[RMDB]
RNA sequence: GGGAACGACUCGAGUAGAGUCGAAAAGAUAUGGAUGUACGGCACGCAACAGCCAUAUGUCGGAAACGACAUGAUGGACAUGCGUGCGUACAUCCUAAGUCAAAACUGUCCACUUCGGUGGACAGAACGCACAAAAGCUGUUCGCAGCUUUUGUGCGAAAAGAAACAACAACAACAAC
Reactivity to DMS in 0.01 (KOAc 150mM, MgCl2 10mM, bicine 150mM(pH8.5), 24C), signal-to-noise 1, nucleotides 027 to 126: g000a010u000a300u010g000g010a020u000g050u000a000c000g020g060c000a000c030g030c010a160a090c260a260g000c010c000a010u000a030u000g000u000c000g020g000a010a010a210c010g030a020c010a020u000g030a040u010g000g000a030c080a300u010g000c050g020u020g000c030g000u020a000c020a000u000c000c000u000a000a070g000u000c000a090a050a160a220c010u000g000u000c010c000a000c000u000u020c190g030g000u000g000g000a000c010a010g000a040a140
Reactivity to 2A3 in 0.01 (KOAc 150mM, MgCl2 10mM, bicine 150mM(pH8.5), 24C), signal-to-noise 2, nucleotides 027 to 126: g020a010u020a030u070g000g000a000u000g000u020a010c060g300g140c120a000c010g030c030a300a250c070a300g020c000c000a000u030a000u040g030u000c000g070g000a040a040a010c000g050a000c020a000u130g210a050u010g060g010a010c100a200u300g000c000g000u000g030c000g010u000a000c000a000u000c000c000u000a000a010g010u000c000a010a010a090a140c010u010g000u000c010c010a000c070u040u050c300g180g000u000g020g000a000c000a000g010a000a010
Chemical mapping of a 177-nucleotide RNA with DMS and 2A3. The data come from the RNA Mapping Database (RMDB), library TTRDES. The RNA was probed in 150 mM KOAc, 10 mM MgCl2 and 150 mM bicine (pH 8.5) at 24 C. For DMS the reverse transcriptase was MarathonRT. For DMS, 1,181 sequencing reads were counted.